[RMDB]
RNA sequence: GGGAACGACUCGAGUAGAGUCGAAAACUAAAGUUAAGCAAGAAUUACCGUUUUAUCACCAUUUAGACAGACUCGCUGUUCAGCAUGCAGCCUUACCGCAUGGCUUAAAGCCGUGGCUUCUAAGUCAUGUCCCAUAUGCACCAUCUGCUCUAUGGUGCACCGGUUUGACAUUCGUGUCAAACCGGUGAAAAGAAACAACAACAACAAC
Reactivity to 2A3 in 0.01 (KOAc 150mM, MgCl2 10mM, bicine 150mM(pH8.5), 24C), signal-to-noise 4, nucleotides 027 to 156: c040u100a050a050a120g190u150u190a090a010g080c080a080a030g090a280a220u190u110a160c080c090g030u040u050u040u070a120u080c020a010c010c000a040u100u070u030a030g060a100c000a030g010a050c030u050c120g000c030u010g030u130u100c090a080g020c020a040u140g010c010a020g030c040c020u080u060a080c030c080g000c030a000u000g000g000c000u020u010a050a000a000g000c020c050g110u120g130g040c010u050u020c040u080a000a000g000u000c010a000u020g070u110c050c010c010a120u140a060u080g010c050a020c060c020a030u020c010u020g010c040u000c000u030a000u010g010g000u000g000
Reactivity to DMS in 0.01 (KOAc 150mM, MgCl2 10mM, bicine 150mM(pH8.5), 24C), signal-to-noise 1, nucleotides 027 to 156: c030u000a070a050a090g020u010u000a090a070g050c090a160a100g000a100a130u000u000a040c080c070g000u000u010u000u000a100u000c050a020c040c080a040u000u000u000a100g040a180c060a120g000a040c060u000c060g020c020u000g020u000u000c050a180g000c200a120u020g030c040a050g060c030c030u000u010a030c010c050g010c000a000u000g020g020c000u000u010a000a010a020g020c000c080g060u000g140g000c000u020u000c080u000a030a040g030u010c000a030u010g000u000c030c020c000a150u020a050u000g000c050a030c100c040a020u000c000u020g000c090u000c040u020a060u000g000g030u000g010